[RMDB]
RNA sequence: GGGAACGACUCGAGUAGAGUCGAAAAGAUAUGGAUCAACUUCGAUAAGGGUCCAUCGGAAACGAUGGAACCCUUUUGACGAAGGUCGUCCUAAGUCGGUAACUCAGAAGCUUCGGCUUCUGAGUAAUGCGUUACAUGUCUUCGGACAUGUAACGCAAAAAGAAACAACAACAACAAC
Reactivity to DMS in 0.01 (KOAc 150mM, MgCl2 10mM, bicine 150mM(pH8.5), 24C), signal-to-noise 1, nucleotides 027 to 126: g010a050u000a130u000g010g030a010u000c050a300a300c000u000u000c010g000a180u030a080a010g020g040g030u000c000c000a000u010c000g000g000a050a040a040c010g010a000u000g000g010a000a080c000c010c030u000u000u000u000g000a260c140g020a010a010g010g000u010c300g030u000c000c000u030a050a240g000u000c000g020g000u000a140a070c000u000c000a030g000a020a000g010c070u000u000c300g010g030c000u000u000c000u000g000a010g030u010a010a090
Chemical mapping of a 177-nucleotide RNA with DMS. The DMS profile rests on 659 reads. It was measured as part of the RMDB library TTRDEL. The reactions ran in a buffer of 150 mM KOAc, 10 mM MgCl2 and 150 mM bicine (pH 8.5), at 24 C.